Source information:
Chemical mapping of a 177-nucleotide RNA with 2A3 and DMS. The data come from the RNA Mapping Database (RMDB), library TTRDES. The RNA was probed in 150 mM KOAc, 10 mM MgCl2 and 150 mM bicine (pH 8.5) at 24 C. DMS adducts were read by reverse transcription with MarathonRT.
[RMDB]
RNA sequence: GGGAACGACUCGAGUAGAGUCGAAAAGAUAUGGAGGGUGCACGGGAGAGCUCAUUCGGAAACGAAUGUUGCUCGAGGAUCGUGCCACCCUCCUAAGUCAAAACCCUUUGACUUCGGUCAAAGGGAACGGAAGUUAACAGUUCGCUGUUAACUUCCGAAAAGAAACAACAACAACAAC
Reactivity to 2A3 in 0.01 (KOAc 150mM, MgCl2 10mM, bicine 150mM(pH8.5), 24C), signal-to-noise 1, nucleotides 027 to 126: g010a020u050a020u130g000g000a000g010g000g020u020g030c010a000c010g040g030g050a300g010a000g000c020u000c000a010u030u000c000g030g030a060a050a030c000g000a000a020u010g090u250u100g050c000u000c000g030a130g030g040a050u060c010g020u020g050c020c000a030c000c000c000u010c000c000u000a000a000g000u030c000a020a030a090a150c000c000c000u010u000u000g000a000c000u070u040c300g110g000u000c000a000a010a010g000g000g000a030a010
Reactivity to DMS in 0.01 (KOAc 150mM, MgCl2 10mM, bicine 150mM(pH8.5), 24C), signal-to-noise 2, nucleotides 027 to 126: g000a040u010a300u010g010g000a020g030g070g040u010g000c000a000c010g000g000g000a040g000a020g020c000u000c010a000u000u000c010g000g010a090a080a170c020g020a010a010u000g000u020u010g010c010u000c010g010a130g010g000a100u000c000g000u000g020c150c080a010c000c000c010u000c000c000u000a000a040g010u000c030a120a080a120a150c000c000c000u000u000u000g000a000c010u000u010c250g060g020u010c000a000a010a000g010g000g010a010a000